Structure probing data (2A3 and DMS) for a 177-nucleotide construct. Source: RMDB library OK1LIB, as collected in RNAgym.
RNA sequence: GGGAACGACUCGAGUAGAGUCGAAAAGAGGGCAGUGACAGUGUGCAGGCUGGGUAUGCGUUGUAGCGGUGUGCUGACUGCGCAUGAACUGGCUACAGCAGUCCUCGGGAACUGAUGUCAUUCCUGAGCGAGUGGCAUCGUUCGCGAUGUUACUCGCAAAAGAAACAACAACAACAAC
Reactivity to 2A3 in 0.01 (KOAc 150mM, MgCl2 10mM, bicine 150mM(pH8.5), 24C), signal-to-noise 9, nucleotides 027 to 126: g110a040g010g030g010c070a050g040u040g080a050c020a070g050u050g030u070g150c050a040g040g050c010u030g000g010g010u140a030u050g030c040g030u030u040g010u030a030g010c030g060g150u190g070u140g100c010u030g120a140c060u070g000c010g000c010a000u020g030a060a040c020u030g070g000c010u030a010c020a020g010c000a010g030u040c000c010u020c020g000g000g010a060a050c050u070g030a060u070g060u050c010a030u020u020c000c010u030g020a010
Reactivity to DMS in 0.01 (KOAc 150mM, MgCl2 10mM, bicine 150mM(pH8.5), 24C), signal-to-noise 8, nucleotides 027 to 126: g000a080g000g000g020c030a060g010u020g010a090c130a090g010u020g020u020g010c090a120g010g000c020u000g000g000g010u010a020u010g010c030g010u000u010g010u010a040g000c010g000g010u030g010u050g000c020u000g010a070c070u010g010c030g000c000a010u010g000a070a190c030u000g000g020c010u000a050c110a120g000c020a120g010u010c030c020u000c020g000g000g010a070a050c050u030g000a060u000g000u010c050a120u000u000c010c010u010g010a300